[RMDB]
RNA sequence: GGGAACGACUCGAGUAGAGUCGAAAAACCAGGCGCACCUCUCCUGCCACCGGGUCGAACAAGCCGCCAAACACCACUGCCUUGAGCACCAAAAGCCAGGCUCCCAAUCCCAGCAGCACCAGGUGGAACAAUCGAUCAGUUUCGACUGAUCGAUUGUAAAAGAAACAACAACAACAAC
Reactivity to DMS in 0.01 (KOAc 150mM, MgCl2 10mM, bicine 150mM(pH8.5), 24C), signal-to-noise 2, nucleotides 027 to 126: a060c030c030a120g010g000c000g020c020a110c070c000u010c040u010c020c010u070g010c110c030a130c000c060g020g000g000u030c070g000a010a060c100a050a130g000c010c060g060c060c000a020a070a110c140a000c070c090a050c010u000g000c020c030u000u000g020a080g000c010a050c100c100a040a020a150a070g000c020c000a060g000g000c030u030c000c020c020a050a090u000c030c000c000a060g010c030a050g010c020a110c050c010a050g010g010u010g000g020a130
Reactivity to 2A3 in 0.01 (KOAc 150mM, MgCl2 10mM, bicine 150mM(pH8.5), 24C), signal-to-noise 3, nucleotides 027 to 126: a000c020c010a020g060g020c020g000c000a020c050c000u060c000u040c030c020u010g030c000c000a020c000c020g020g010g020u050c030g040a050a030c030a050a020g060c020c020g010c010c000a010a050a010c050a010c010c010a030c030u060g020c010c000u080u110g010a030g040c030a030c050c040a030a140a000a040g010c020c010a010g030g000c010u050c010c020c020a010a010u000c000c000c000a010g040c030a000g000c000a010c030c010a050g030g020u030g030g040a040